[RMDB]
RNA sequence: GGGAACGACUCGAGUAGAGUCGAAAAACGGUGCGUGGACGGAGAAGCUGCGCAACGCAGAGUGGGCCCAGGACUACAACGACGCGCAGGUCUUUACUGCGGAUGGGAAGCCGGAACAGACAACGGAAUUUAGCACUAAUUUCGAUUAGUGCUAAAUAAAAGAAACAACAACAACAAC
Reactivity to DMS in 0.01 (KOAc 150mM, MgCl2 10mM, bicine 150mM(pH8.5), 24C), signal-to-noise 9, nucleotides 027 to 126: a090c040g010g010u000g000c030g020u010g010g010a070c070g010g000a150g010a110a120g010c010u000g010c030g010c050a050a060c050g010c060a060g010a120g020u000g010g010g010c030c030c050a100g010g010a080c050u000a080c090a070a090c070g010a080c150g010c040g000c030a030g000g000u000c090u000u000u010a090c030u000g010c020g010g000a090u010g010g010g000a070a100g010c020c020g010g010a070a080c090a070g000a050c090a040a060c060g000g010a130
Reactivity to 2A3 in 0.01 (KOAc 150mM, MgCl2 10mM, bicine 150mM(pH8.5), 24C), signal-to-noise 6, nucleotides 027 to 126: a000c030g020g010u040g000c020g020u030g010g040a070c040g090g060a130g030a120a020g020c010u020g000c010g000c050a020a010c030g000c030a020g050a020g140u090g000g030g010c000c010c010a040g040g040a020c040u070a040c070a140a020c060g060a010c030g020c010g000c060a010g020g010u020c030u070u160u050a060c030u030g010c010g030g020a050u070g060g000g030a040a010g010c020c010g010g020a020a020c020a030g100a030c030a060a010c050g060g000a090

Structure probing data (DMS and 2A3) for a 177-nucleotide construct. DMS adducts were read by reverse transcription with MarathonRT. 2A3 adducts were read by reverse transcription with SuperScript II with manganese. It was measured as part of the RMDB library OK2TST. The 2A3 profile rests on 15,546 reads.